Source: RMDB library OK3TST, as collected in RNAgym. Chemical mapping of a 207-nucleotide RNA with 2A3 and DMS. DMS adducts were read by reverse transcription with MarathonRT. For 2A3, 964 sequencing reads were counted. Reactivities are given for positions 27 through 156. 2A3 adducts were read by reverse transcription with SuperScript II with manganese.

RNA sequence: GGGAACGACUCGAGUAGAGUCGAAAAGCUCAUUGAAGAAUUUAUUCUGAUGCUAACAGGAAGGUUGAUGAUCUCAAGUACAAUUGACUCAGAUAGCAAAAGGACAUUAGAGGAUGAUGCCCUCUGUUUGGAGGAUCUGCUUGAUAGUGACAAUGAGUGACACUUCCAUGUUCGCAUGGAAGUGUCAAAAAGAAACAACAACAACAAC
Reactivity to 2A3 in 0.01 (KOAc 150mM, MgCl2 10mM, bicine 150mM(pH8.5), 24C), signal-to-noise 2, nucleotides 027 to 156: g020c000u000c020a020u000u100g030a110a050g000a110a100u050u190u130a130u180u000c040u010g040a030u080g000c020u000a040a070c020a050g100g060a120a010g040g020u000u020g080a080u050g050a070u040c070u030c080a060a090g040u090a080c050a100a180u050u110g020a040c000u000c000a010g050a160u030a010g050c020a040a040a010a010g030g000a010c040a060u100u090a020g000a010g120g050a040u080g030a020u060g060c010c000c040u070c020u000g110u010u030u100g080g000a040g000g010a020u030c000u030g020c010u020u040g010a040u020a100g040u010g050a000c000a010a050u060g000a010g020
Reactivity to DMS in 0.01 (KOAc 150mM, MgCl2 10mM, bicine 150mM(pH8.5), 24C), signal-to-noise 1, nucleotides 027 to 156: g070c000u010c010a020u010u000g000a120a150g000a110a090u020u010u000a030u010u020c040u000g000a180u000g010c040u000a080a070c070a040g000g010a120a090g050g020u010u010g010a140u010g000a130u040c080u000c020a000a070g010u000a020c060a130a140u000u000g040a110c040u000c040a050g000a100u000a060g000c040a000a070a130a040g000g030a060c010a040u010u000a040g030a170g090g030a130u030g010a010u010g010c060c020c010u000c080u000g000u010u010u000g020g000a140g000g000a030u000c060u020g000c030u000u000g010a100u010a040g000u000g000a080c020a050a130u000g000a040g000